Structure probing data (2A3 and DMS) for a 177-nucleotide construct.
2A3 adducts were read by reverse transcription with SuperScript II with manganese.
[RMDB]
RNA sequence: GGGAACGACUCGAGUAGAGUCGAAAAGUCUCCUCCCUUGUUCCCCUUCGUCCUCUCCUCGUCUCGGAUUGGCUCAUUCUCAGGUCGGGCGAGGGUCCUCAGUUCUCUCUAUUCUUUCUUUUUGAAACCAUUAUUUAACGUUCGCGUUAAAUAAUGGAAAAGAAACAACAACAACAAC
Reactivity to 2A3 in 0.01 (KOAc 150mM, MgCl2 10mM, bicine 150mM(pH8.5), 24C), signal-to-noise 2, nucleotides 027 to 126: g050u000c020u010c020c010u020c000c000c000u020u050g010u030u010c000c000c000c000u040u050c020g040u020c000c010u020c010u050c010c000u010c020g050u010c060u030c070g010g040a060u040u040g030g020c020u020c030a130u190u000c050u000c050a040g020g040u030c010g010g010g040c020g020a010g000g000g010u000c000c000u030c000a050g010u070u010c010u000c000u000c020u060a100u150u010c020u050u060u020c000u070u030u050u050u100g110a080a040a030
Reactivity to DMS in 0.01 (KOAc 150mM, MgCl2 10mM, bicine 150mM(pH8.5), 24C), signal-to-noise 3, nucleotides 027 to 126: g010u000c060u000c030c020u020c010c000c020u010u010g010u010u000c020c010c000c110u000u000c060g010u010c030c030u000c050u000c020c000u000c030g010u000c020u000c070g010g000a150u000u010g010g000c090u000c120a130u000u000c050u000c060a100g010g010u010c050g010g010g020c020g010a050g020g010g000u000c020c010u000c040a090g000u000u000c020u010c030u000c040u010a140u010u000c050u000u000u000c010u000u000u010u000u010g010a110a170a230